[RMDB]
RNA sequence: GGGAACGACUCGAGUAGAGUCGAAAAUGUAGCGAAUCUCCCCCUGCAUCGCCAAAACCUGUUGUAACGACAACGGGUGCUUUGUCUCCUUAUAGAUAAGUUCAAUGCCCUCGCGUUGCCAAAAUCGCGAGGUGUGCAGUUUCGACUGCACACCUCGAAAAGAAACAACAACAACAAC
Reactivity to DMS in 0.01 (KOAc 150mM, MgCl2 10mM, bicine 150mM(pH8.5), 24C), signal-to-noise 2, nucleotides 027 to 126: u020g000u000a080g010c060g020a160a110u010c090u010c010c020c000c010c020u000g010c030a050u000c030g030c050c110a050a080a070a020c020c020u020g030u000u000g000u000a130a140c300g000a110c030a000a040c030g000g000g010u000g000c080u010u000u000g020u020c040u000c100c060u000u000a080u000a090g010a040u010a040a070g010u000u000c060a050a080u000g010c030c030c010u000c080g020c000g000u000u000g010c080c130a000a030a050a060u000c070g000